This 177-nucleotide RNA was probed chemically with 2A3 and DMS.
[RMDB]
RNA sequence: GGGAACGACUCGAGUAGAGUCGAAAAAUGCCGCAUUCAGUGACGGUAACUCUAGUGGGCAACUGUCAAUCUAGCGUUGACAUCUACAUACUAUAUAGUAAUACCAAUACUCAAGACUACGAAACGGCCCUAUUAGGACCUUCGGGUCCUAAUAGGGAAAAGAAACAACAACAACAAC
Reactivity to 2A3 in 0.01 (KOAc 150mM, MgCl2 10mM, bicine 150mM(pH8.5), 24C), signal-to-noise 5, nucleotides 027 to 126: a000u100g020c020c020g060c020a040u050u100c060a030g120u030g110a120c030g010g010u010a070a050c010u000c000u060a010g020u050g070g000g000c030a130a060c030u030g000u030c010a020a060u010c020u080a050g040c020g140u020u000g000a010c010a030u070c020u080a090c020a130u100a090c010u010a000u070a060u060a220g060u060a050a060u040a080c020c030a060a040u030a160c040u060c050a040a050g040a080c070u060a030c140g110a080a040a010c040g040g000
Reactivity to DMS in 0.01 (KOAc 150mM, MgCl2 10mM, bicine 150mM(pH8.5), 24C), signal-to-noise 2, nucleotides 027 to 126: a120u000g010c170c000g040c080a050u000u000c300a130g030u000g010a140c130g000g020u020a110a110c080u000c090u000a030g000u000g000g000g000c020a080a100c160u000g030u000c080a000a000u000c070u040a070g000c230g040u000u000g010a000c030a140u060c090u010a110c170a070u020a050c080u030a000u000a020u000a080g020u000a080a010u100a080c090c090a060a140u000a040c030u000c100a040a020g010a080c130u020a180c040g000a050a000a000c180g000g000
Conditions: 150 mM KOAc, 10 mM MgCl2 and 150 mM bicine (pH 8.5), 24 C. 2A3 adducts were read by reverse transcription with SuperScript II with manganese. The data come from the RNA Mapping Database (RMDB), library OK1LIB.